Structure probing data (DMS and 2A3) for a 177-nucleotide construct.

[RMDB]
RNA sequence: GGGAACGACUCGAGUAGAGUCGAAAAGAAGAGAGCGUAGCACACACUCAGACUGUACGACAGUCUGACACACACCUACGCUAGUGCAUCGUGUGUGUGAUAUCGAUGUUGCACGUAGAUGAGGAAAGAGAGGAUGCUUGUUCGCAAGCAUCCUCUCAAAAGAAACAACAACAACAAC
Reactivity to DMS in 0.01 (KOAc 150mM, MgCl2 10mM, bicine 150mM(pH8.5), 24C), signal-to-noise 2, nucleotides 027 to 126: g010a210a090g010a110g000a070g000c020g020u000a000g040c080a070c120a040c070a070c210u010c000a000g000a000c010u000g020u000a170c230g000a120c000a000g010u000c000u000g010a010c050a030c080a060c050a060c170c050u000a030c060g020c000u010a080g020u000g000c030a070u000c030g000u010g010u020g000u010g020u000g040a050u000a090u010c110g000a220u000g000u010u000g040c020a010c040g000u000a060g000a050u000g010a110g000g030a040a060a050
Reactivity to 2A3 in 0.01 (KOAc 150mM, MgCl2 10mM, bicine 150mM(pH8.5), 24C), signal-to-noise 1, nucleotides 027 to 126: g210a070a030g110a000g040a000g020c020g020u040a000g000c180a010c020a000c000a000c040u040c020a010g000a030c010u010g030u190a120c190g170a040c210a000g060u000c010u010g000a000c000a000c000a000c000a010c030c010u030a000c010g010c000u030a020g090u030g000c000a020u040c000g110u040g020u020g000u000g010u020g150a000u000a020u200c150g040a100u150g000u060u000g020c000a000c000g030u070a040g010a090u110g020a010g040g050a030a090a010

DMS adducts were read by reverse transcription with MarathonRT.
Conditions: 150 mM KOAc, 10 mM MgCl2 and 150 mM bicine (pH 8.5), 24 C.
Values cover nucleotides 27 to 126.